[RMDB]
RNA sequence: GGGAACGACUCGAGUAGAGUCGAAAAUAGCGCCAUGUCUGCUGAGACUAAGAAGCUCGUAGUGACUGAAGAUGCUGUUCUUCAGCGUGCAACCGUGAUUGAGAAUAUUGUUACGCCUGAACUGAUUUCGAAGAAGAUUCAGGUUGAGCAGUUGGCCUCGUUAGUGUUAAUUCGUUAACACUAACGAAAAAGAAACAACAACAACAAC
Reactivity to DMS in 0.01 (KOAc 150mM, MgCl2 10mM, bicine 150mM(pH8.5), 24C), signal-to-noise 5, nucleotides 027 to 156: u000a110g030c080g040c010c030a090u000g030u000c020u000g010c030u000g020a200g000a180c060u000a100a130g010a150a130g020c020u010c060g020u000a100g020u000g020a070c000u010g000a030a050g000a070u000g030c160u010g010u000u000c020u000u000c000a020g020c010g030u010g020c040a080a100c070c040g030u010g000a150u000u000g020a150g010a130a130u000a100u010u000g010u000u010a110c140g010c000c000u000g000a020a020c010u000g010a200u000u000u000c110g020a180a160g020a120a190g000a070u000u000c000a000g020g020u000u000g020a050g020c000a070g020u000u010g010g010c050c040
Reactivity to 2A3 in 0.01 (KOAc 150mM, MgCl2 10mM, bicine 150mM(pH8.5), 24C), signal-to-noise 8, nucleotides 027 to 156: u110a000g030c030g000c030c010a040u080g050u040c020u030g020c030u070g060a030g010a080c030u080a120a100g080a090a030g130c020u020c030g070u080a080g080u020g090a100c010u010g010a010a000g010a020u140g120c180u150g130u110u000c010u030u030c000a000g010c030g040u060g010c020a040a060c050c050g050u050g050a140u110u130g020a070g030a100a040u130a080u160u070g050u060u030a050c030g000c000c010u010g010a020a010c020u030g080a180u100u180u290c170g080a090a050g050a040a010g050a110u000u010c000a000g000g030u040u080g000a000g000c020a010g010u030u040g020g000c020c010
An RNA of 207 nucleotides, treated with DMS and 2A3 and read out base by base. DMS adducts were read by reverse transcription with MarathonRT. The 2A3 profile rests on 7,069 reads.